[RMDB]
RNA sequence: GGGAACGACUCGAGUAGAGUCGAAAAUCAGCCUACAUUUUACAUCUUCCUCCAAGGCUGAGAGAGGAUUGCCCUAGCAACACUUCGAGUGCUCAGUAGCCAUAUGCGGUAUAGUAUAUACAGUAACCACAUAUGGCUGCUGAGCACAUACGGGUACGUACCACAGAUGUUUCGACAUCUGUGGUACAAAAGAAACAACAACAACAAC
Reactivity to DMS in 0.01 (KOAc 150mM, MgCl2 10mM, bicine 150mM(pH8.5), 24C), signal-to-noise 1, nucleotides 027 to 156: u010c000a040g000c010c010u010a160c110a120u030u010u000u010a100c150a170u000c000u000u010c040c020u000c030c040a110a140g020g030c020u020g020a080g040a180g010a180g000g000a090u010u010g000c010c060c010u000a130g050c020a100a070c080a180c060u010u000c080g010a230g070u000g000c000u000c000a010g050u000a000g000c000c010a020u000a020u000g030c010g000g000u010a080u020a110g020u000a180u000a220u010a150c030a190g010u000a080a040c010c010a000c040a010u010a050u000g020g020c000u000g010c000u000g020a050g000c020a000c000a000u000a020c000g000g000g020u000a050c150